[RMDB]
RNA sequence: GGGAACGACUCGAGUAGAGUCGAAAAUCACGAGUAUGUGCGGCUCGGUGAGCAUCCCGAGCGUGCCGUCCAGCGGGCGAUGAUGUCCGUCGGGAAGGUGAUCGCCGCGUCCGCGGCAACGGUCGGAAUGGUUAAACUCAUUCGUGAGUUUAACCAUAAAAGAAACAACAACAACAAC
Reactivity to 2A3 in 0.01 (KOAc 150mM, MgCl2 10mM, bicine 150mM(pH8.5), 24C), signal-to-noise 6, nucleotides 027 to 126: u040c010a010c020g010a020g040u090a060u270g120u110g050c060g030g010c020u000c020g130g000u080g010a030g050c040a080u070c010c000c000g000a040g030c010g030u070g000c000c010g020u010c010c010a020g040c050g030g030g010c040g070a160u280g050a070u240g100u000c010c010g050u050c090g090g000g010a010a050g060g010u050g050a090u090c050g000c020c010g050c010g080u110c080c070g000c000g000g000c040a030a020c020g030g080u040c010g020g030a080
Reactivity to DMS in 0.01 (KOAc 150mM, MgCl2 10mM, bicine 150mM(pH8.5), 24C), signal-to-noise 9, nucleotides 027 to 126: u000c020a070c020g010a050g020u000a060u000g010u010g010c070g010g010c010u000c010g020g010u010g000a050g020c160a140u000c060c010c010g000a060g010c040g020u000g010c000c010g000u000c020c070a250g010c010g010g010g000c010g010a100u010g000a180u010g010u000c000c010g010u010c130g000g010g010a050a030g000g010u010g000a070u000c080g010c010c020g020c040g010u010c120c160g010c020g000g010c030a060a020c040g000g010u000c020g000g010a150